[RMDB]
RNA sequence: GGGAACGACUCGAGUAGAGUCGAAAACAUUGUGUGCGACGUGGGGUACGAAAGUUGAUAGCUACCGUUAUGAUGGAUCCUGCCAUGAUGAUUUAUGACUCUGGUCAUAUACCCUUCCUCAACGUUGAUUGGGAAAAGGAAGACGUUGAGUGUGACGUGUUGGGCAUCACUUCGGUGAUGCCCAACAAAAAGAAACAACAACAACAAC
Reactivity to 2A3 in 0.01 (KOAc 150mM, MgCl2 10mM, bicine 150mM(pH8.5), 24C), signal-to-noise 1, nucleotides 027 to 156: c010a010u050u040g020u010g060u020g110c030g010a040c120g080u170g040g000g010g040u050a040c060g050a130a100a150g070u040u100g020a130u050a100g000c030u020a030c000c030g190u130u120a130u100g220a080u100g000g000a060u050c030c000u030g010c000c000a020u020g020a030u060g030a110u000u040u180a210u070g000a010c000u000c060u200g060g080u000c000a000u010a050u170a130c010c000c000u020u040c030c000u000c000a020a000c030g000u010u010g180a300u160u300g060g010g010a010a060a060a060g040g040a020a000g000a040c020g020u030u000g000a060g030u110g080u020g030a060c000g000
Record summary:
This 207-nucleotide RNA was probed chemically with 2A3. For 2A3, 461 sequencing reads were counted. Reactivities are given for positions 27 through 156. 2A3 adducts were read by reverse transcription with SuperScript II with manganese. It was measured as part of the RMDB library OK3TST.